Source information: Chemical mapping of a 177-nucleotide RNA with DMS and 2A3. The reactions ran in a buffer of 150 mM KOAc, 10 mM MgCl2 and 150 mM bicine (pH 8.5), at 24 C. Values cover nucleotides 27 to 126.
RNA sequence: GGGAACGACUCGAGUAGAGUCGAAAAAAUGCAUACAUCAUGCAUAUAGUAUAUUAUAAUGUAGAAUAAAGCAGUAUGAUGUGAUAGAAUAAUACAAUACAAUGUUCUAUAAUGCAGUAUAUUGUACCAUAUAGUGGGCUUUCGAGCCCACUAUAUGAAAAGAAACAACAACAACAAC
Reactivity to DMS in 0.01 (KOAc 150mM, MgCl2 10mM, bicine 150mM(pH8.5), 24C), signal-to-noise 2, nucleotides 027 to 126: a130a070u010g010c010a050u010a070c020a110u010c040a060u020g010c000a080u010a120u010a130g010u010a140u000a070u000u000a080u000a140a110u030g000u010a060g000a110a140u000a060a100a190g040c060a060g010u000a020u000g000a070u010g010u010g010a140u010a040g000a050a020u000a090a050u000a030c040a040a040u010a080c070a110a060u010g000u010u000c020u010a020u010a140a110u010g000c010a080g000u000a050u000a070u010u010g020u010a050c180
Reactivity to 2A3 in 0.01 (KOAc 150mM, MgCl2 10mM, bicine 150mM(pH8.5), 24C), signal-to-noise 1, nucleotides 027 to 126: a000a000u020g000c000a040u060a080c000a060u010c010a000u070g020c000a020u030a010u020a160g020u040a120u010a020u300u170a140u160a300a110u120g010u060a030g070a290a070u120a150a070a040g070c000a010g010u020a020u030g020a020u000g000u010g000a020u000a020g010a030a030u110a130a040u120a050c080a040a030u030a060c000a020a090u000g010u000u000c020u000a020u020a130a100u030g000c000a000g060u050a050u010a060u130u070g020u060a060c000